[RMDB]
Record summary: Conditions: 150 mM KOAc, 10 mM MgCl2 and 150 mM bicine (pH 8.5), 24 C. An RNA of 177 nucleotides, treated with 2A3 and DMS and read out base by base. For 2A3, 1,082 sequencing reads were counted. Values are in units of 0.01, from 0 to 300, in steps of 10. It was measured as part of the RMDB library OK2TRN. For 2A3 the reverse transcriptase was SuperScript II with manganese. For DMS, 888 sequencing reads were counted. Reactivities are given for positions 27 through 126.
RNA sequence: GGGAACGACUCGAGUAGAGUCGAAAAUGUGCGAACGGCAAGCGCGUGCAGUGCUUCGGCGGUGCGAAGAACCAUCUUCUCAUCAUGCUGGAUGCCGAUAUGGACCAGACCGUCGAUGCGCUGAUCAGCAUGCCCCACUAUUCGUAGUGGGGCAUGCAAAAGAAACAACAACAACAAC
Reactivity to 2A3 in 0.01 (KOAc 150mM, MgCl2 10mM, bicine 150mM(pH8.5), 24C), signal-to-noise 1, nucleotides 027 to 126: u160g020u040g000c040g040a080a000c010g160g050c150a160a000g080c030g060c030g060u100g010c020a000g010u020g060c000u000u000c000g010g010c000g000g000u080g070c100g000a000a030g030a030a000c090c000a120u030c070u060u000c030u000c000a100u080c040a030u190g110c060u070g090g040a070u100g150c030c010g000a050u080a030u220g010g010a050c030c020a000g010a010c000c020g000u000c000g010a000u000g000c000g000c000u000g000a010u000c030a000
Reactivity to DMS in 0.01 (KOAc 150mM, MgCl2 10mM, bicine 150mM(pH8.5), 24C), signal-to-noise 1, nucleotides 027 to 126: u000g030u010g000c040g000a030a100c140g020g000c040a070a110g010c030g000c030g000u010g000c000a000g000u000g010c020u000u000c010g040g000c000g000g000u000g030c160g000a070a010g000a050a220c250c190a040u000c060u010u000c020u000c020a100u020c110a170u030g010c090u000g000g000a070u020g000c030c010g020a090u020a090u010g020g000a100c020c060a060g000a040c000c000g000u000c000g010a010u000g000c060g040c000u000g010a090u000c100a110